[RMDB]
Record summary: This 177-nucleotide RNA was probed chemically with DMS. Reactivities are given for positions 27 through 126. Values are in units of 0.01, from 0 to 300, in steps of 10. The RNA was probed in 150 mM KOAc, 10 mM MgCl2 and 150 mM bicine (pH 8.5) at 24 C.
RNA sequence: GGGAACGACUCGAGUAGAGUCGAAAACGAAACAUCUGGCAUUCAUCCACACAGCGCCCCCUAGUGUUCCGGGUAGUCCAUAGAUAAAUUCUAGGCCACUUAAGCUGUUAUUAAGUGCAAUUUUACAAUAGUAGGUCAGUUUCGACUGACCUACUAUAAAAGAAACAACAACAACAAC
Reactivity to DMS in 0.01 (KOAc 150mM, MgCl2 10mM, bicine 150mM(pH8.5), 24C), signal-to-noise 2, nucleotides 027 to 126: c080g020a130a130a090c100a070u000c050u000g010g000c050a100u010u010c020a090u000c030c040a060c100a060c060a060g010c090g030c040c000c010c030c030u000a050g020u000g000u010u000c030c030g010g020g010u010a050g020u000c010c010a080u010a040g010a120u010a050a070a140u000u000c050u000a090g000g020c090c020a040c000u000u000a010a050g010c130u000g000u000u020a050u000u000a000a050g010u000g010c120a100a060u000u000u000u000a100c150a070

Notes
DMS adducts were read by reverse transcription with MarathonRT.